[RMDB]
RNA sequence: GGGAACGACUCGAGUAGAGUCGAAAAACUGACGGUACGCCGUCAGAACGGUAGAAAAGAUGGGUUGAAAACCACGCCUUCUACCAAUAUAGUAAAUAAAUAGGCGGAGCGGUCAUACGUGACCGCAAAAACAUAUUCAGCUUCGGCUGAAUAUGAAGUCUGUGUAUCACUUCGGUGAUACACAGACAAAAGAAACAACAACAACAAC
Reactivity to 2A3 in 0.01 (KOAc 150mM, MgCl2 10mM, bicine 150mM(pH8.5), 24C), signal-to-noise 2, nucleotides 027 to 156: a000c000u000g000a000c000g000g020u070a050c230g080c020c000g000u000c000a000g000a020a020c050g000g000u000a000g020a020a040a000a010g050a210u050g010g000g000u070u140g080a020a020a000a040c000c000a000c000g020c000c000u000u020c000u000a000c000c000a010a000u120a000u030a010g080u080a020a030a090u110a090a100a040u200a020g000g000c020g010g010a010g000c000g000g030u000c020a030u060a160c230g080u030g000a000c000c000g000c020a040a000a000a000a000c000a000u000a000u000u010c000a010g000c000u040u180c230g120g000c010u010g000a000a000u000a000u000g000a060a010
The record gives the reactivity of an RNA of 207 nucleotides to 2A3. The data come from the RNA Mapping Database (RMDB), library M2RFPK. The 2A3 profile rests on 1,088 reads. The reactions ran in a buffer of 150 mM KOAc, 10 mM MgCl2 and 150 mM bicine (pH 8.5), at 24 C.